Chemical mapping of a 207-nucleotide RNA with 2A3. The reactions ran in a buffer of 150 mM KOAc, 10 mM MgCl2 and 150 mM bicine (pH 8.5), at 24 C. It was measured as part of the RMDB library RNAMAK.
RNA sequence: GGGAACGACUCGAGUAGAGUCGAAAAUGCGUGUUCGCACGCACUAAGCACCUUUGUGGCAACAGCGAUUCGAUAAGUUCCCACGACCCAUUGGGUCGUGGUGAACUUUUGACGAAUCGGUGUUGCCACUCUGGUAUUUGAGUCACUUCGGUGACAAGUUCCGGGAAUAUUUCGAUAUUCCCGGAACAAAAGAAACAACAACAACAAC
Reactivity to 2A3 in 0.01 (KOAc 150mM, MgCl2 10mM, bicine 150mM(pH8.5), 24C), signal-to-noise 2, nucleotides 027 to 156: u070g000c020g000u040g040u030u110c220g020c140a000c000g070c000a020c070u150a100a070g080c080a020c010c000u000u000u020g000u000g000g030c010a000a000c000a010g280c000g000a000u000u000c000g000a010u000a070a010g000u010u010c000c000c000a000c000g000a010c000c050c130a300u270u300g020g020g000u000c020g000u000g000g050u210g000a000a000c000u000u020u010u050g070a040c000g000a000a000u010c000g000g000u000g000u000u000g000c000c010a000c000u020c000u000g010g000u020a100u040u170u200g060a050g000u010c000a000c030u020u110c300g120g010u020g000a000c000a010a000